[RMDB]
This 177-nucleotide RNA was probed chemically with DMS and 2A3. The DMS profile rests on 10,635 reads. Reactivities are rounded to 0.1 and cut off at 0 and 3. For 2A3, 9,202 sequencing reads were counted. The data come from the RNA Mapping Database (RMDB), library OK1LIB.
RNA sequence: GGGAACGACUCGAGUAGAGUCGAAAAAUGGCUGGUGAUCCACCACUAAGUAGAGCCACAGAGGAUGGUUUAUUGAAGUUGCUGGAAAAACCUUCAUCAUUAAACAUUCCAAAAGGAUUGAGCAUUAAGUCUAUCUUACUUUCGAGUAAGAUAGACUAAAAGAAACAACAACAACAAC
Reactivity to DMS in 0.01 (KOAc 150mM, MgCl2 10mM, bicine 150mM(pH8.5), 24C), signal-to-noise 6, nucleotides 027 to 126: a010u010g000g020c040u010g000g000u020g010a300u020c010c020a040c100c050a040c040u010a100a080g010u020a050g030a070g000c020c010a040c080a170g020a120g010g020a120u000g000g010u000u000u010a050u010u000g000a100a080g000u010u000g030c160u020g010g010a000a070a070a090a050c030c010u000u000c030a050u030c020a020u010u000a090a060a110c130a130u010u010c010c000a080a060a070a090g010g000a090u010u000g010a080g000c120a080u010u010a080
Reactivity to 2A3 in 0.01 (KOAc 150mM, MgCl2 10mM, bicine 150mM(pH8.5), 24C), signal-to-noise 8, nucleotides 027 to 126: a000u030g030g000c030u020g000g000u030g030a040u030c010c000a010c010c000a010c040u040a040a060g070u050a030g060a010g100c040c000a030c030a040g300a100g140g050a180u030g040g020u020u030u040a060u040u090g030a080a040g030u080u060g020c150u050g020g000a050a030a000a030a020c010c000u020u020c030a120u020c000a000u010u090a050a110a040c030a050u050u020c010c010a060a150a040a080g080g020a120u100u150g040a060g050c080a080u030u160a070